Source information: The data come from the RNA Mapping Database (RMDB), library M2RFOK. The record gives the reactivity of an RNA of 207 nucleotides to 2A3.
RNA sequence: GGGAACGACUCGAGUAGAGUCGAAAACCUCACUACAUUUUACUGUUCCUAAAGAAUUUGUGACAGGUACAGUAAAACGUAUUGCAACGUUUAUCAGUUCCUAUAAACAGGUAAAUAACAAUAUAUGAAAAGCAAAGACUGUUCGCAGUCUUUGCAACGACAAAAGAGUCUUCGGACUCUUUUGUCGAAAAGAAACAACAACAACAAC
Reactivity to 2A3 in 0.01 (KOAc 150mM, MgCl2 10mM, bicine 150mM(pH8.5), 24C), signal-to-noise 2, nucleotides 027 to 156: c000c000u030c020a020c020u040a000c010a020u000u000u000u020a000c000u030g010u010u050c010c000u030a030a130a070g130a300a300u300u240u210g200u120g030a080c060a060g000g000u000a000c000a010g010u000a000a000a000a000c010g000u030a010u010u060g030c030a040a070c100g010u000u040u060a070u050c050a030g000u040u010c060c020u130a140u120a080a100a010c060a000g000g080u030a100a090a070u070a060a070c020a080a030u140a020u050a110u210g040a040a150a100a000g000c000a000a000a000g010a000c010u010g020u030u050c160g000c080a020g000u010c000u000u000u000g000c000a000a000
For 2A3, 731 sequencing reads were counted.